[RMDB]
RNA sequence: GGGAACGACUCGAGUAGAGUCGAAAAGAUAUGGACUGGACAACAGCGUACUGGGUCGGAAACGACCUUACGACAUGUCUUGUCCUAAGUCAAAACACCCCUCAAUGGUUCGCCAUUGAGGGGUGAACGUCUUCAGAAUGUUCGCAUUCUGAAGACGAAAAGAAACAACAACAACAAC
Reactivity to DMS in 0.01 (KOAc 150mM, MgCl2 10mM, bicine 150mM(pH8.5), 24C), signal-to-noise 2, nucleotides 027 to 126: g010a020u000a260u030g000g000a030c000u000g000g000a010c010a040a080c180a140g000c040g000u000a010c300u030g010g010g010u000c000g000g000a040a040a120c010g010a000c000c000u000u000a000c010g030a110c020a130u000g000u000c010u000u000g000u000c000c000u010a020a100g000u010c020a100a040a230a210c020a010c010c000c010c000u000c000a010a000u000g000g000u010u000c260g020c000c000a000u000u000g000a000g000g000g000g000u010g000a000a030